[RMDB]
RNA sequence: GGGAACGACUCGAGUAGAGUCGAAAAGAAAGUAGCGAAGCAACAGUGCAUCAGGCUGUUGCGACCUGAUGCUAAAGGAUAGCACCAUGUACGCUAUCCGAGUACGUGGAAAAGCUACGAAAAGAAAGGGAUAACGUUUGUUCGCAAACGUUAUCCCAAAAGAAACAACAACAACAAC
Reactivity to DMS in 0.01 (KOAc 150mM, MgCl2 10mM, bicine 150mM(pH8.5), 24C), signal-to-noise 2, nucleotides 027 to 126: g010a120a100a100g000u010a010g010c000g120a140a100g030c090a110a020c040a130g050u010g000c010a070u020c100a060g010g000c060u020g010u030u000g020c080g000a030c010c020u000g010a030u040g000c000u010a110a110a170g000g010a020u000a050g000c010a150c130c130a210u000g000u100a130c190g000c000u000a010u000c010c030g010a050g000u010a090c140g040u010g000g000a020a170a050a140g010c000u000a000c020g010a080a050a130a060g030a040a170a200
Reactivity to 2A3 in 0.01 (KOAc 150mM, MgCl2 10mM, bicine 150mM(pH8.5), 24C), signal-to-noise 2, nucleotides 027 to 126: g030a000a090a010g020u020a000g000c000g170a280a000g010c000a000a000c030a020g100u050g080c000a080u020c100a030g030g000c020u070g070u250u300g010c010g000a050c000c000u030g000a020u070g020c000u140a120a110a050g060g000a050u120a040g000c020a060c040c000a140u180g080u090a030c060g000c000u010a010u030c000c000g000a000g000u020a000c090g060u050g040g000a000a030a000a000g010c000u020a000c070g040a100a000a000a000g240a050a040a000